[RMDB]
RNA sequence: GGGAACGACUCGAGUAGAGUCGAAAAGAAAGAAAGAAAGAUUUCUAUAAAAUUUUGAUUGUUGCUCAGAAAGCCGUGCAUUUGAAACGGGUCGCUUUCGAGCAGUAAUCAAAGUCAAAUAAAACAAACUUUGUAUUGACUUCGGUCAAUACAAAGUAAAAGAAACAACAACAACAAC
Reactivity to 2A3 in 0.01 (KOAc 150mM, MgCl2 10mM, bicine 150mM(pH8.5), 24C), signal-to-noise 2, nucleotides 027 to 126: g050a030a080a000g010a030a050a010g030a070a230a020g020a070u080u060u000c040u070a130u120a260a100a170a220u020u000u000u010g000a000u000u000g000u000u000g000c000u000c070a090g010a050a020a010g020c010c000g030u020g060c080a180u090u160u300g150a160a140a030c010g000g000g100u110c030g060c030u000u000u000c000g000a000g000c000a000g000u000a000a000u000c000a000a000a000g000u000c020a040a040a140u200a110a130a030a020c060a050a110